[RMDB]
RNA sequence: GGGAACGACUCGAGUAGAGUCGAAAACAUUACACAUACCUAUAUUUGUCUAUUGGUUUGAAGGGAGAAGAAAGUGGGUCGAAGCCCAAAUGGUUAUGUUUAGAAGAUACCUCAGAUAAUAACCAUUGCUUUGCAUACAGUUUUAUUUACCAGUGCAGCUAAUACUCGUAUUCGUACGAGUAUUAGCAAAAGAAACAACAACAACAAC
Reactivity to DMS in 0.01 (KOAc 150mM, MgCl2 10mM, bicine 150mM(pH8.5), 24C), signal-to-noise 3, nucleotides 027 to 156: c060a120u010u000a090c080a080c060a130u000a130c020c020u000a110u000a090u000u000u010g020u000c040u000a070u000u000g020g000u000u000u010g010a080a080g000g010g010a120g020a090a140g000a040a060a130g030u000g020g010g030u010c040g010a070a110g000c010c060c020a060a030a070u000g000g020u010u000a010u010g010u000u010u000a150g020a050a050g000a200u000a110c100c040u000c030a080g010a080u000a060a030u000a010a020c000c010a040u000u000g000c040u010u010u000g030c010a110u000a060c050a090g020u000u000u010u000a110u010u030u000a090c040c070a130g030u000g040c060a210
Reactivity to 2A3 in 0.01 (KOAc 150mM, MgCl2 10mM, bicine 150mM(pH8.5), 24C), signal-to-noise 6, nucleotides 027 to 156: c020a060u120u250a050c060a000c020a050u170a090c020c030u090a070u050a050u180u090u120g090u030c050u060a090u050u100g050g020u050u030u040g080a090a060g020g010g020a050g010a080a030g050a080a070a020g050u080g020g020g030u040c040g050a040a010g010c030c010c020a020a020a010u020g000g000u000u010a010u020g030u020u120u070a110g020a140a040g000a140u170a180c010c030u030c030a000g010a030u100a170a010u020a000a270c000c000a000u010u010g020c030u050u040u090g020c010a020u050a150c020a040g000u030u000u080u130a130u090u140u060a050c030c050a020g090u130g040c010a020

The record gives the reactivity of an RNA of 207 nucleotides to DMS and 2A3. The 2A3 profile rests on 3,375 reads. It was measured as part of the RMDB library OK3TST. The RNA was probed in 150 mM KOAc, 10 mM MgCl2 and 150 mM bicine (pH 8.5) at 24 C.